Source: RMDB library M2PK90, as collected in RNAgym. This 177-nucleotide RNA was probed chemically with DMS and 2A3. The RNA was probed in 150 mM KOAc, 10 mM MgCl2 and 150 mM bicine (pH 8.5) at 24 C.

RNA sequence: GGGAACGACUCGAGUAGAGUCGAAAACAAAAUAAUUUUUCGCCGCUGAGGGAUGCGCGUGCGCUCUGUCAGCAUGCCGAGCAGCGGGCGGAACGCACGCUCGUUCCCAACUCUACUCGAGAAAAAAUCAUUACGUACCGUUCGCGGUACGUAAUGAAAAAGAAACAACAACAACAAC
Reactivity to DMS in 0.01 (KOAc 150mM, MgCl2 10mM, bicine 150mM(pH8.5), 24C), signal-to-noise 1, nucleotides 027 to 126: c180a090a040a100a090u020a140a040u020u000u000u000u000c020g010c300c300g000c260u010g000a140g020g000g000a010u000g020c170g020c020g000u010g010c000g000c000u000c010u000g000u010c010a020g010c000a060u010g010c020c240g020a070g010c010a030g000c000g010g000g000c010g010g000a000a020c010g000c040a000c030g060c010u000c020g000u010u010c000c000c020a080a070c040u000c010u000a000c000u000c000g010a020g010a000a020a050a150a050a050
Reactivity to 2A3 in 0.01 (KOAc 150mM, MgCl2 10mM, bicine 150mM(pH8.5), 24C), signal-to-noise 1, nucleotides 027 to 126: c040a020a150a090a160u300a090a150u050u000u030u020u030c040g000c090c020g140c210u120g030a180g020g000g000a000u020g000c010g000c000g000u010g010c030g000c010u000c010u000g070u020c000a040g000c020a040u020g010c040c130g300a130g000c000a000g000c030g000g010g000c000g020g000a010a000c000g050c000a000c020g010c000u030c010g020u000u000c000c000c000a000a030c010u000c000u010a010c030u000c000g000a000g000a020a010a000a040a010a010